An RNA of 177 nucleotides, treated with 2A3 and DMS and read out base by base. Values cover nucleotides 27 to 126.

RNA sequence: GGGAACGACUCGAGUAGAGUCGAAAAUUUUCACUGAAAUGUCGAGUAUUUUUGCGAUGCAUGGUAAAGAAAUCAAGGUGACCAGGUUUCUUUUCAAUUUUCCCCCAUAAUUGAAGAGUUACAAUGCACAUAUGCCAGGGUUCGCCCUGGCAUAUGUAAAAGAAACAACAACAACAAC
Reactivity to 2A3 in 0.01 (KOAc 150mM, MgCl2 10mM, bicine 150mM(pH8.5), 24C), signal-to-noise 2, nucleotides 027 to 126: u040u000u000u010c070a070c140u100g060a090a040a000u090g010u020c080g010a000g040u020a030u020u040u010u040u030g000c020g010a000u010g060c020a020u030g190g100u210a030a040a030g040a000a060a000u120c040a030a140g170g030u120g060a120c020c000a010g000g020u050u080u000c000u000u000u000u000c000a040a070u000u000u030u180c000c020c000c050c000a010u070a020a010u000u060g020a050a050g110a000g090u020u010a040c060a100a050u180g040c090
Reactivity to DMS in 0.01 (KOAc 150mM, MgCl2 10mM, bicine 150mM(pH8.5), 24C), signal-to-noise 2, nucleotides 027 to 126: u030u000u000u000c040a080c010u000g010a080a020a070u030g020u010c010g000a300g000u020a000u000u000u000u000u000g020c020g000a000u000g010c120a090u000g010g040u010a100a010a060g000a020a010a030u000c020a050a180g020g040u000g000a080c030c080a050g000g000u020u000u010c000u000u000u010u000c000a020a000u010u000u000u000c040c030c010c010c040a060u040a010a030u010u000g010a000a020g000a040g050u000u050a090c060a100a050u010g000c120
The DMS profile rests on 2,435 reads. The reactions ran in a buffer of 150 mM KOAc, 10 mM MgCl2 and 150 mM bicine (pH 8.5), at 24 C.